Annotation
Structure probing data (2A3 and DMS) for a 177-nucleotide construct.
[RMDB]
RNA sequence: GGGAACGACUCGAGUAGAGUCGAAAACGACACCUGCGUGGGCACCGAUUCCCACACCACCAUGGUCAAUGGCCUUGGCGUUCUGGGCUGGGGCGUCGGCGGUAUCGAAGCUGAAGCGGCCAUGCUACACCCUCAGUAGUUUCGACUACUGAGGGUGAAAAGAAACAACAACAACAAC
Reactivity to 2A3 in 0.01 (KOAc 150mM, MgCl2 10mM, bicine 150mM(pH8.5), 24C), signal-to-noise 3, nucleotides 027 to 126: c010g040a030c030a040c070c030u060g020c040g040u070g000g030g030c060a050c100c040g040a220u070u070c010c000c010a000c020a020c020c010a040c020c000a020u030g000g000u010c020a040a230u180g110g000c000c010u010u040g010g000c050g050u170u090c100u210g040g140g000c050u050g020g020g000g010c010g020u060c020g010g040c030g020g040u110a100u240c100g070a100a020g020c020u060g010a030a000g060c030g020g010c000c000a020u010g000c010u070a060
Reactivity to DMS in 0.01 (KOAc 150mM, MgCl2 10mM, bicine 150mM(pH8.5), 24C), signal-to-noise 3, nucleotides 027 to 126: c100g000a080c060a060c050c000u000g010c110g010u010g000g020g000c100a080c030c040g000a200u000u010c020c010c000a140c140a110c060c020a050c160c030a020u000g020g000u000c020a100a140u010g020g010c010c020u010u000g000g010c040g010u000u010c120u000g000g010g000c050u010g020g000g010g010c040g000u000c010g020g030c020g020g000u000a070u020c130g000a040a190g010c020u000g010a080a110g000c060g000g000c000c030a030u000g020c080u000a200

The reactions ran in a buffer of 150 mM KOAc, 10 mM MgCl2 and 150 mM bicine (pH 8.5), at 24 C. 2A3 adducts were read by reverse transcription with SuperScript II with manganese. Source: RMDB library OK2TST, as collected in RNAgym.